RNA sequence: GGGAACGACUCGAGUAGAGUCGAAAAACAGCGCGUCGUUGUAGAGCGGACGAAAGCUCUGGCUUCGGGCCCGCUCUCAAUGGUAGCAGACGAUCGAGAGAGGGUCCUCUCGAGAGCUGGGCCAUACGCGGGUAUCUAGGUUCGCCUGGGUACCCGCAAAAGAAACAACAACAACAAC
Reactivity to 2A3 in 0.01 (KOAc 150mM, MgCl2 10mM, bicine 150mM(pH8.5), 24C), signal-to-noise 8, nucleotides 027 to 126: a000c020a010g030c020g010c020g040u030c010g000u000u020g040u130a000g000a000g010c000g000g010a020c010g080a120a040a010g000c010u030c110u210g200g000c000u010u010c010g070g020g030c000c000c000g000c000u000c000u000c010a000a020u000g010g020u080a060g090c010a010g040a060c030g030a040u020c010g000a000g000a000g020a080g060g090g080u080c010c000u000c000u000c000g020a010g000a000g000c000u020g000g050g030c000c000a050u040a100c100
Reactivity to DMS in 0.01 (KOAc 150mM, MgCl2 10mM, bicine 150mM(pH8.5), 24C), signal-to-noise 5, nucleotides 027 to 126: a070c050a080g020c070g010c080g020u000c040g000u000u000g000u030a020g010a010g010c010g010g000a060c010g000a030a060a040g020c010u010c210u050g010g000c020u000u000c040g000g000g010c130c010c000g010c000u000c000u000c040a060a030u000g000g000u010a090g030c100a060g000a110c060g000a100u000c020g010a020g000a020g010a150g010g000g010u020c060c000u000c000u000c020g000a020g000a180g010c000u000g000g000g010c080c010a060u020a040c190
Conditions: 150 mM KOAc, 10 mM MgCl2 and 150 mM bicine (pH 8.5), 24 C.
This 177-nucleotide RNA was probed chemically with 2A3 and DMS.
For DMS, 17,281 sequencing reads were counted.
Reactivities are given for positions 27 through 126.
It was measured as part of the RMDB library OK1LIB.
DMS adducts were read by reverse transcription with MarathonRT.